Description:
The data come from the RNA Mapping Database (RMDB), library OK1LIB. This 177-nucleotide RNA was probed chemically with 2A3. For 2A3, 487 sequencing reads were counted.

[RMDB]
RNA sequence: GGGAACGACUCGAGUAGAGUCGAAAAUGUUAGCUAUCGCACUGCAUAUGUUGCAAGGGACGCCAUAUAUUUACCAAGGUGAAGAAAUUGGUAUGACGGACCCACAUUUUACAUCAAUAGCACAAUACUUUAAGGACGGCUUCGGCCGUCCUUAAAGAAAAGAAACAACAACAACAAC
Reactivity to 2A3 in 0.01 (KOAc 150mM, MgCl2 10mM, bicine 150mM(pH8.5), 24C), signal-to-noise 2, nucleotides 027 to 126: u110g020u030u070a050g000c020u020a030u140c110g040c160a020c000u040g000c050a030u030a130u130g020u060u060g080c170a150a140g040g000g000a000c040g000c020c000a060u090a000u000a110u130u170u000a000c000c010a030a000g000g040u190g270a110a070g040a170a240a170u000u000g010g000u000a040u090g000a020c020g020g010a090c000c090c000a000c040a000u150u120u070u060a010c040a100u120c040a030a200u000a080g130c020a000c030a110a050u130a120